[RMDB]
This 177-nucleotide RNA was probed chemically with DMS. Source: RMDB library 15KREP, as collected in RNAgym. For DMS the reverse transcriptase was MarathonRT. In probing experiments dimethyl sulfate is read out at A N1 and C N3, which are open when not base-paired. Values cover nucleotides 27 to 126.

RNA sequence: GGGAACGACUCGAGUAGAGUCGAAAACUCUUGUUCUCGAGGGCCUUCCUUCUGCGGUGAUCCUCCCUCUCCUUGUCGGUGAACCCGCUCUUGUGAGGCCUCUUCAUAGGUCCGGAGUCGACCUCCAGUUAAGCCUAUACUUCGGUAUAGGCUUAACAAAAGAAACAACAACAACAAC
Reactivity to DMS in 0.01 (KOAc 150mM, MgCl2 10mM, bicine 150mM(pH8.5), 24C), signal-to-noise 2, nucleotides 027 to 126: c020u000c030u000u030g020u010u020c000u000c060g000a090g020g000g020c040c070u000u010c080c010u000u010c040u010g000c060g020g000u000g010a130u000c010c000u000c010c030c000u020c010u010c060c050u010u000g010u000c100g010g000u020g010a090a150c200c010c020g010c060u000c040u000u000g020u010g020a100g000g020c020c010u010c080u010u010c130a120u010a060g020g020u000c040c050g000g000a040g000u010c050g000a100c030c020u010c070c020a130